[RMDB]
RNA sequence: GGGAACGACUCGAGUAGAGUCGAAAAACGUCAGCCAUCAUCUUCUGCAUGCUCGACAUGAGCUUCGCCUCGGUCAUCUCACCCCCGUCAGCAGUCUCCUUUGCAAACUUCUCCGCCGUCGCCUCAACCAUCGCGAGCAUAUGAGGUGGGAGCAUGGCCUAAACAGCACAUUCGUGUGCUGUUUAGGAAAAGAAACAACAACAACAAC
Reactivity to 2A3 in 0.01 (KOAc 150mM, MgCl2 10mM, bicine 150mM(pH8.5), 24C), signal-to-noise 2, nucleotides 027 to 156: a000c070g070u070c040a000g020c040c000a020u060c000a010u020c060u090u010c030u030g010c000a020u040g010c030u050c010g050a070c100a230u130g040a020g030c000u050u080c060g010c000c000u000c020g040g010u010c030a090u000c040u060c060a140c010c000c030c000c000g030u040c030a020g000c000a000g000u000c020u050c000c020u080u120u120g050c090a080a080a060c010u050u010c030u010c050c020g030c000c020g120u060c000g010c000c040u090c010a020a010c030c020a020u060c030g000c030g050a030g000c050a050u030a080u190g040a020g020g020u000g010g010g000a000g010c030a020u060g090g010